The record gives the reactivity of an RNA of 177 nucleotides to DMS and 2A3. For DMS, 1,689 sequencing reads were counted. Source: RMDB library OK2TRN, as collected in RNAgym. For 2A3 the reverse transcriptase was SuperScript II with manganese. DMS adducts were read by reverse transcription with MarathonRT.

RNA sequence: GGGAACGACUCGAGUAGAGUCGAAAAGAUCGGUACACAUGGACAUGCAUGGCUGAUCCAUAUGCGAUCGUACAUGGAUCAGACUGGAUCUGCUCAUACAUGUAGUCUAGCGAUGCCAUGCGUACCCGCAUGUAGACGCGUUCGCGCGUCUACAUGCAAAAGAAACAACAACAACAAC
Reactivity to DMS in 0.01 (KOAc 150mM, MgCl2 10mM, bicine 150mM(pH8.5), 24C), signal-to-noise 2, nucleotides 027 to 126: g000a120u010c090g000g020u000a060c040a060c020a010u000g000g000a280c040a010u000g040c010a090u010g000g030c010u030g000a010u030c000c000a040u000a090u010g000c110g000a070u000c060g070u010a090c170a120u000g000g030a010u000c030a050g000a060c120u010g000g030a060u010c030u000g000c000u030c100a100u000a130c070a010u000g000u000a040g010u010c050u000a100g010c110g000a060u010g010c000c020a000u000g010c030g030u000a020c030c020c250
Reactivity to 2A3 in 0.01 (KOAc 150mM, MgCl2 10mM, bicine 150mM(pH8.5), 24C), signal-to-noise 3, nucleotides 027 to 126: g090a080u170c070g000g000u010a010c010a010c000a000u020g010g030a010c020a000u020g030c010a020u050g060g000c010u020g000a010u040c010c000a030u030a040u160g070c060g080a160u100c100g010u050a090c040a160u150g050g010a020u040c000a020g090a100c020u030g020g000a020u040c020u020g030c000u060c080a090u090a090c040a050u100g040u050a040g030u000c040u070a050g060c040g080a050u070g010c020c000a010u010g020c000g020u000a010c000c000c000